[RMDB]
RNA sequence: GGGAACGACUCGAGUAGAGUCGAAAAGCAACCGACGCGAUCACGACGGCCGAAGCAGCGCUCGGCGCGGGCCGUGUGGGCUUGAUCGUAUGGGCUGAUCGCGCCGCAUACGAACGCGCGGCGACCAAAGCCAAUCAAGCCAAGCCCACAUAGCGCCGCACUCGUUACGUUUCGACGUAACGAGUGCAAAAGAAACAACAACAACAAC
Reactivity to 2A3 in 0.01 (KOAc 150mM, MgCl2 10mM, bicine 150mM(pH8.5), 24C), signal-to-noise 2, nucleotides 027 to 156: g020c020a070a000c000c050g010a040c050g000c000g050a050u100c040a040c170g200a040c020g050g000c040c010g120a120a050g060c170a030g020c020g020c110u050c080g100g000c030g000c020g010g010g020c040c000g010u000g000u010g000g000g000c000u030u010g020a040u170c070g030u090a100u090g040g010g000c030u060g060a160u130c050g000c000g040c020c000g000c000a040u120a230c150g100a190a030c060g080c010g030c030g100g000c000g010a030c000c070a050a040a000g000c000c020a010a060u120c060a060a030g060c000c000a000a000g000c000c040c000a000c000a000u050a050g020c040g000c010c010